[RMDB]
RNA sequence: GGGAACGACUCGAGUAGAGUCGAAAAAAGAAGUUCAGUUGACCAGGGACGGCGCUUCGGCGCUACGUUGUACGGAAGACAGAAGACCGACCGGCGAAUGCUUCCUCAGUUCGCCGCUCUCGAAGUCGCGUUAAUGUUUAUUCGUAAACAUUAACGCAAAAGAAACAACAACAACAAC
Reactivity to 2A3 in 0.01 (KOAc 150mM, MgCl2 10mM, bicine 150mM(pH8.5), 24C), signal-to-noise 4, nucleotides 027 to 126: a000a000g180a100a000g030u120u120c110a020g000u040u050g050a040c010c020a060g110g000g070a020c010g020g000c000g000c000u050u020c170g090g010c000g010c000u020a060c040g020u020u050g060u060a060c050g020g000a030a010g020a040c020a020g140a110a030g010a050c010c020g000a050c110c100g000g000c000g010a010a010u060g020c070u090u050c010c010u050c050a040g010u020u010c000g000c010c000g000c000u010c000u000c000g060a110a020g040u050c040
Reactivity to DMS in 0.01 (KOAc 150mM, MgCl2 10mM, bicine 150mM(pH8.5), 24C), signal-to-noise 5, nucleotides 027 to 126: a090a070g000a090a060g020u010u020c050a080g020u000u000g010a250c030c010a100g010g010g000a060c060g000g010c020g000c000u020u020c110g000g000c000g020c010u010a030c090g010u000u000g030u000a140c170g010g010a050a180g000a050c020a080g020a120a110g000a040c070c030g000a040c170c000g000g000c000g010a020a030u000g010c120u010u000c040c010u010c060a280g010u000u000c000g000c010c000g010c070u000c020u000c030g000a120a130g000u010c090
Background:
The data come from the RNA Mapping Database (RMDB), libraries RFM100 and RFMREP. This 177-nucleotide RNA was probed chemically with 2A3 and DMS. Values cover nucleotides 27 to 126.